[RMDB]
RNA sequence: GGGAACGACUCGAGUAGAGUCGAAAAGAUAUGGACCCACGAGCUCCAGGUCGGAAACGACCUGAAGAGCGAUGAGUGGCGUCCUAAGUCAAAGAUGAAUGGGAGGCUUCGGCCUCCCAUUCAUCAAGUGGUAAUGUUUGUUCGCAAACAUUACCACAAAAGAAACAACAACAACAAC
Reactivity to DMS in 0.01 (KOAc 150mM, MgCl2 10mM, bicine 150mM(pH8.5), 24C), signal-to-noise 2, nucleotides 027 to 126: g010a030u000a300u000g020g000a000c040c000c000a000c010g010a210g010c010u000c000c010a010g010g030u000c000g010g000a100a120a200c010g000a010c000c000u000g010a080a090g000a020g000c020g000a070u000g010a230g010u000g000g020c170g020u000c000c000u000a010a100g000u010c060a110a170a130g000a010u000g000a000a000u000g000g000g000a030g000g000c010u000u010c210g020g000c010c000u000c000c000c000a000u000u000c010a000u000c000a040a090